[RMDB]
RNA sequence: GGGAACGACUCGAGUAGAGUCGAAAAGUUUCAUCCUUCGGGAUGAAACAAAUAAAGUGACCCUCGCGCGUCACUGGCAUCGAGUAGGUCGAGCCGCCUACAAAAUCGACGGGUUCGCCCGUCGAAAGCAUAGCAAAAGGUUCGCCUUUUGCUAUGCAAAAGAAACAACAACAACAAC
Reactivity to DMS in 0.01 (KOAc 150mM, MgCl2 10mM, bicine 150mM(pH8.5), 24C), signal-to-noise 3, nucleotides 027 to 126: g000u000u000u000c000a000u010c000c000u000u000c200g010g020g000a010u000g000a000a010a000c000a030a060a030u020a060a080a030g010u010g000a010c010c030c040u000c230g020c190g010c140g020u010c010a000c010u000g010g020c090a050u000c150g000a130g010u000a030g010g000u000c020g000a120g020c010c020g020c010c000u000a020c060a080a040a070a130u000c000g000a010c000g010g000g020u010u000c210g020c000c000c000g020u000c000g010a000a020a110
Reactivity to 2A3 in 0.01 (KOAc 150mM, MgCl2 10mM, bicine 150mM(pH8.5), 24C), signal-to-noise 3, nucleotides 027 to 126: g000u010u000u010c000a000u010c000c000u000u080c230g130g000g000a010u020g000a000a000a000c000a000a010a000u120a010a080a020g000u010g010a020c000c000c050u070c120g110c020g030c050g030u000c010a000c030u010g040g020c030a160u140c090g010a030g020u040a020g050g150u050c070g020a020g020c030c030g000c020c000u030a050c010a010a060a000a130u030c000g010a000c000g000g000g020u020u050c200g100c020c010c000g000u010c000g000a000a010a010
Chemical mapping of a 177-nucleotide RNA with DMS and 2A3. For DMS, 2,423 sequencing reads were counted. Conditions: 150 mM KOAc, 10 mM MgCl2 and 150 mM bicine (pH 8.5), 24 C. For 2A3, 4,176 sequencing reads were counted.